[RMDB]
This 207-nucleotide RNA was probed chemically with DMS and 2A3. For DMS, 2,017 sequencing reads were counted. For 2A3 the reverse transcriptase was SuperScript II with manganese. The RNA was probed in 150 mM KOAc, 10 mM MgCl2 and 150 mM bicine (pH 8.5) at 24 C. For 2A3, 2,406 sequencing reads were counted. Values cover nucleotides 27 to 156. Source: RMDB library M2RFPK, as collected in RNAgym.
RNA sequence: GGGAACGACUCGAGUAGAGUCGAAAAGGCUGCGUAUCACUCUAGGGUACGUGAUAGUGCGAUAUAAGAAGCACUGGUACAUGCCGGCAGGGACAGUUAAGAGAUGGCGGCAGUCUCGUGUCCCUGCAAAAGGAGUUCUCGUUCGCGAGAACUCCAACGAUAUGCUCCUGUUCGCAGGAGCAUAUCGAAAAGAAACAACAACAACAAC
Reactivity to DMS in 0.01 (KOAc 150mM, MgCl2 10mM, bicine 150mM(pH8.5), 24C), signal-to-noise 1, nucleotides 027 to 156: g010g030c020u000g010c000g080u000a060u000c070a150c080u030c220u030a220g060g010g030u000a000c060g010u000g000a100u010a030g020u000g000c010g000a190u010a130u020a240a130g000a130a260g000c010a010c000u000g010g000u010a090c020a090u000g050c000c020g040g020c000a030g060g000g000a030c010a060g020u000u000a160a150g000a030g010a020u000g010g030c080g030g020c070a270g010u010c000u010c010g040u010g000u000c000c000c000u010g010c000a020a000a040a170g020g010a020g010u000u000c010u000c000g040u000u000c210g050c060g020a010g000a030a000c010u000c000c000a000a040
Reactivity to 2A3 in 0.01 (KOAc 150mM, MgCl2 10mM, bicine 150mM(pH8.5), 24C), signal-to-noise 3, nucleotides 027 to 156: g040g000c040u040g000c020g010u000a000u030c040a080c170u130c180u200a160g070g030g030u010a020c040g000u020g020a040u110a050g000u000g010c010g050a020u030a020u070a300a090g120a070a010g000c000a000c010u010g000g060u090a050c040a080u180g020c020c000g010g000c000a000g000g010g000a000c010a040g040u110u180a240a040g010a000g000a000u030g060g160c030g040g010c040a020g000u000c000u000c000g020u000g010u000c000c000c000u000g000c000a000a010a000a000g010g000a010g000u000u000c010u000c000g020u060u050c180g000c000g100a000g000a000a000c000u000c000c000a010a010